[RMDB]
RNA sequence: GGGAACGACUCGAGUAGAGUCGAAAAUCUUAGCGUUUCGACGCUAAGAAAACGUGGUGGAGGAGCUGGAAAGCUCGGCAUUAAAGGGAUAAAAACAUCUUCAUAUAGGGUCGUUCGCGACCCUAAAACUUGAUGAUUGGUUCGCCAAUCAUCAAGUAAAAGAAACAACAACAACAAC
Reactivity to DMS in 0.01 (KOAc 150mM, MgCl2 10mM, bicine 150mM(pH8.5), 24C), signal-to-noise 2, nucleotides 027 to 126: u010c000u000u000a000g010c000g000u000u000u000c140g020a040c000g030c000u020a000a000g000a030a050a090a090c130g020u000g000g000u000g000g000a120g000g000a020g010c020u000g010g020a090a090a050g000c020u000c010g010g000c090a090u000u000a090a070a130g000g000g000a240u020a010a080a080a060a070c060a050u010c050u000u000c090a090u020a210u010a020g020g000g020u000c000g030u000u010c160g020c000g000a000c010c000c000u000a010a010a030
Reactivity to 2A3 in 0.01 (KOAc 150mM, MgCl2 10mM, bicine 150mM(pH8.5), 24C), signal-to-noise 1, nucleotides 027 to 126: u000c000u000u000a000g000c000g020u000u050u110c230g090a010c000g000c000u010a010a000g030a000a030a000a000c100g040u070g020g130u140g030g100a140g050g030a030g010c050u010g030g140a100a060a010g000c000u000c010g030g000c010a000u100u050a070a070a040g000g010g030a010u090a060a170a060a010a000c060a140u020c040u220u140c100a040u240a000u020a210g030g000g030u000c020g000u030u040c150g020c010g040a000c000c000c000u010a010a020a010
An RNA of 177 nucleotides, treated with DMS and 2A3 and read out base by base. For DMS the reverse transcriptase was MarathonRT. 2A3 adducts were read by reverse transcription with SuperScript II with manganese. It was measured as part of the RMDB library M2PK50. Reactivities are given for positions 27 through 126.